[RMDB]
RNA sequence: GGGAACGACUCGAGUAGAGUCGAAAACCAGCAGCCCCUUUUUUUCCAGACCAAGGGCUGUGAACCCGCCUGGGGAUGAGGCCUGGUCUUGUGGAACUGAACUUAGCUCGACGGGGCUGACCGCUCUACGCUAUUUAAAUUUCGAUUUAAAUAGCGUAAAAGAAACAACAACAACAAC
Reactivity to DMS in 0.01 (KOAc 150mM, MgCl2 10mM, bicine 150mM(pH8.5), 24C), signal-to-noise 5, nucleotides 027 to 126: c010c000a200g000c020a010g000c000c000c000c010u000u000u010u010u000u020u000c020c020a030g000a030c040c020a070a070g010g010g020c000u000g010u030g000a150a190c000c010c030g010c250c200u020g000g020g010g000a110u010g010a210g000g000c000c000u010g000g000u000c000u010u020g030u030g010g010a020a060c280u020g000a060a070c110u010u010a090g000c050u010c090g000a120c220g000g000g000g020c000u010g000a040c100c120g010c110u010c090u000
Reactivity to 2A3 in 0.01 (KOAc 150mM, MgCl2 10mM, bicine 150mM(pH8.5), 24C), signal-to-noise 9, nucleotides 027 to 126: c000c000a010g020c000a000g000c000c000c000c010u030u060u030u010u010u070u060c010c020a010g010a010c000c010a100a110g090g020g000c010u010g020u030g030a020a020c010c010c010g250c150c280u300g020g000g000g010a030u150g110a030g020g050c000c010u030g010g020u020c000u060u170g080u140g020g020a020a020c030u070g020a050a030c020u150u190a070g080c060u070c100g100a080c070g020g010g000g000c000u000g000a000c000c040g050c010u010c010u010
The record gives the reactivity of an RNA of 177 nucleotides to DMS and 2A3. The reactions ran in a buffer of 150 mM KOAc, 10 mM MgCl2 and 150 mM bicine (pH 8.5), at 24 C. For 2A3 the reverse transcriptase was SuperScript II with manganese.